Conditions: 150 mM KOAc, 10 mM MgCl2 and 150 mM bicine (pH 8.5), 24 C.
Structure probing data (DMS and 2A3) for a 177-nucleotide construct.
RNA sequence: GGGAACGACUCGAGUAGAGUCGAAAAAUAUCCGCAUCGAGCUGUACGGCGGGCAGGUCUUCCAUCGGCGCAUCCUCGACGUCAGUGAGCUGAACGUCGACGUCGAGCGCAUGGCGAUCGACAGCGCACAGACUGACGUGUUCGCACGUCAGUCUGUAAAAGAAACAACAACAACAAC
Reactivity to DMS in 0.01 (KOAc 150mM, MgCl2 10mM, bicine 150mM(pH8.5), 24C), signal-to-noise 2, nucleotides 027 to 126: a090u000a110u010c040c020g000c080a120u000c100g010a120g010c020u010g030u000a050c120g020g010c020g040g000g000c140a070g000g010u000c010u000u010c040c030a080u000c110g000g020c000g020c000a110u020c090c080u000c010g000a030c000g020u000c010a040g000u000g020a150g020c090u020g020a070a050c020g020u000c020g010a030c070g000u000c020g000a040g030c060g010c050a120u010g010g020c300g000a060u010c030g010a040c050a090g010c000g030c110
Reactivity to 2A3 in 0.01 (KOAc 150mM, MgCl2 10mM, bicine 150mM(pH8.5), 24C), signal-to-noise 2, nucleotides 027 to 126: a000u100a040u050c000c030g030c040a120u100c050g080a020g040c040u030g050u110a040c060g020g020c000g010g040g020c020a040g030g000u020c030u080u060c050c020a090u060c050g050g000c020g000c010a070u100c050c040u000c010g010a010c000g010u000c010a000g030u050g180a080g070c070u040g040a070a020c000g030u000c020g060a010c000g050u020c020g000a030g000c040g000c010a090u120g060g000c030g000a080u050c000g000a010c030a010g020c000g040c020

For DMS, 1,646 sequencing reads were counted. The 2A3 profile rests on 1,757 reads.